[RMDB]
An RNA of 177 nucleotides, treated with 2A3 and DMS and read out base by base. For DMS the reverse transcriptase was MarathonRT.
RNA sequence: GGGAACGACUCGAGUAGAGUCGAAAAGAUAUGGAUCUUUGUGAAGGACGACGAUCUCGGAAACGAGGGAGUCCCACGGGAGAUCCUAAGUCAAACCAGGUGUGUCCGUUCGCGGACACACCUGGAACAAUGAUACCCUCUUCGGAGGGUAUCAUUGAAAAGAAACAACAACAACAAC
Reactivity to 2A3 in 0.01 (KOAc 150mM, MgCl2 10mM, bicine 150mM(pH8.5), 24C), signal-to-noise 3, nucleotides 027 to 126: g040a020u070a050u180g020g010a000u030c010u020u060u080g050u030g160a300a220g010g000a000c020g030a070c030g020a040u000c000u000c020g010g030a090a070a060c010g000a000g000g000g000a020g010u000c040c000c000a030c060g140g090g000a030g000a010u010c010c010u040a180a020g050u040c060a080a060a090c000c000a000g010g000u020g000u010g010u000c000c020g040u080u120c300g010c020g170g000a000c010a000c000a000c000c000u000g000g000a000a010
Reactivity to DMS in 0.01 (KOAc 150mM, MgCl2 10mM, bicine 150mM(pH8.5), 24C), signal-to-noise 3, nucleotides 027 to 126: g010a040u010a300u020g000g010a010u000c000u000u000u010g020u010g000a170a110g010g020a020c020g020a080c240g000a070u010c000u000c000g000g000a110a090a210c010g000a020g000g000g010a070g000u010c000c000c010a040c020g000g000g000a010g000a000u000c000c000u000a020a090g010u000c040a080a100a210c000c000a000g000g030u000g020u000g000u010c000c000g030u000u010c200g020c020g000g020a010c000a000c000a000c000c000u000g000g000a020a040